[RMDB]
Chemical mapping of a 177-nucleotide RNA with 2A3 and DMS. DMS (dimethyl sulfate) methylates the pairing face of unpaired adenines and cytosines. The 2A3 profile rests on 10,274 reads. Conditions: 150 mM KOAc, 10 mM MgCl2 and 150 mM bicine (pH 8.5), 24 C. 2A3 adducts were read by reverse transcription with SuperScript II with manganese. It was measured as part of the RMDB library OK1LIB.
RNA sequence: GGGAACGACUCGAGUAGAGUCGAAAAGCUUCACUGCCGUCAACGGCGACAAGACCAAAAAAGGUCGGCCUUCAUGGGGCACCGAUGCUGCCGUCGCCCUCCGCCCCGCGAGCUCCGGCAACGACGCCACGGUCAUAAUGUUCGCAUUAUGACCGUGAAAAGAAACAACAACAACAAC
Reactivity to 2A3 in 0.01 (KOAc 150mM, MgCl2 10mM, bicine 150mM(pH8.5), 24C), signal-to-noise 8, nucleotides 027 to 126: g010c020u080u070c030a030c120u080g030c020c010g110u170c050a140a120c070g010g010c020g030a020c050a060a060g030a030c000c030a090a090a070a050a050a010g030g000u010c000g000g020c010c000u130u130c080a130u200g020g000g010g020c010a010c030c030g050a050u100g020c040u050g020c020c020g050u060c030g020c010c000c000u030c030c020g000c010c000c000c010g020c020g010a020g000c020u010c020c000g030g010c020a060a020c060g090a030c030g020c020
Reactivity to DMS in 0.01 (KOAc 150mM, MgCl2 10mM, bicine 150mM(pH8.5), 24C), signal-to-noise 5, nucleotides 027 to 126: g010c030u000u000c080a100c070u000g010c030c020g000u030c100a080a100c150g000g000c010g000a090c100a080a060g010a060c030c020a010a070a090a100a120a080g000g010u000c020g000g000c060c000u000u020c090a100u020g000g010g000g030c040a080c110c070g010a050u010g000c060u000g010c030c020g010u010c040g000c020c020c030u020c040c040g010c040c000c000c040g000c070g000a060g010c040u000c060c050g000g000c050a060a130c070g000a110c080g000c080